[RMDB]
RNA sequence: GGGAACGACUCGAGUAGAGUCGAAAAGGAUACCGUGCUCCACAGCUGUAAGGCUGUGGGCCCGAGAGAAGUCGCUCUCUCUCGCCCUUCACAUCCCUCUCGGCAUUGAGAUGACCAUAGGCCAGGGGUGAGUCCUUAAGUGGACACAGCUGAUCUACAAUUUUACUGAGUUCGCUCAGUAAAAUUGAAAAGAAACAACAACAACAAC
Reactivity to 2A3 in 0.01 (KOAc 150mM, MgCl2 10mM, bicine 150mM(pH8.5), 24C), signal-to-noise 2, nucleotides 027 to 156: g070g010a050u150a220c040c110g000u120g030c030u080c060c000a000c000a020g010c000u030g090u250a170a150g050g020c020u010g000u040g010g010g000c000c000c010g010a010g000a010g030a090a010g070u190c030g030c060u040c010u000c000u010c000u000c080g030c000c010c000u110u090c070a040c010a100u050c000c050c000u070c040u080c070g000g000c030a080u080u200g040a110g050a140u130g090a080c060c060a090u150a110g090g000c040c030a000g020g000g000g070u010g020a020g010u000c010c000u130u100a120a120g300u130g070g000a000c030a000c010a110g020c080u110g020a120u020c030u020a040
An RNA of 207 nucleotides, treated with 2A3 and read out base by base. It was measured as part of the RMDB library VIROID. The RNA was probed in 150 mM KOAc, 10 mM MgCl2 and 150 mM bicine (pH 8.5) at 24 C. 2A3 adducts were read by reverse transcription with SuperScript II with manganese.